[RMDB]
RNA sequence: GGGAACGACUCGAGUAGAGUCGAAAAGAGCCAGACUUCGGUCUGGCUCAAAGUGGACGAGGAGCGCUGAACCCACACAUAACAAGACAGCGCAAAAUAAAAAAAGGUUCGACUUCGGUCGAACCAACAGGAUAUACUUCUUCGGAAGUAUAUCCUGAAAAGAAACAACAACAACAAC
Reactivity to 2A3 in 0.01 (KOAc 150mM, MgCl2 10mM, bicine 150mM(pH8.5), 24C), signal-to-noise 2, nucleotides 027 to 126: g020a000g010c000c000a010g000a010c040u050u070c220g000g040u000c000u000g000g000c000u010c000a000a000a020g000u000g010g010a010c070g040a060g020g170a140g070c010g000c010u020g020a140a140c000c120c000a010c010a000c000a060u280a130a020c050a030a010g070a030c010a000g000c000g000c040a040a000a100a030u100a020a080a000a000a000a010a050g000g020u010u020c010g000a010c010u010u080c190g040g000u000c020g000a000a000c000c000a000a010
Reactivity to DMS in 0.01 (KOAc 150mM, MgCl2 10mM, bicine 150mM(pH8.5), 24C), signal-to-noise 2, nucleotides 027 to 126: g000a000g020c000c000a010g020a010c000u000u010c200g040g010u010c010u020g000g020c010u000c000a000a010a080g020u010g000g020a070c120g010a090g010g040a180g040c010g010c000u000g010a200a090c050c000c000a010c040a100c130a100u010a070a090c130a070a130g000a140c030a030g000c000g070c020a060a080a050a080u010a010a020a090a100a060a090a040g010g010u000u000c020g000a000c020u020u010c160g000g000u000c000g000a000a000c000c010a030a020

The record gives the reactivity of an RNA of 177 nucleotides to 2A3 and DMS.
The reactions ran in a buffer of 150 mM KOAc, 10 mM MgCl2 and 150 mM bicine (pH 8.5), at 24 C.
DMS adducts were read by reverse transcription with MarathonRT.
The DMS profile rests on 1,620 reads.
2A3 adducts were read by reverse transcription with SuperScript II with manganese.
Values cover nucleotides 27 to 126.
It was measured as part of the RMDB library M2PK50.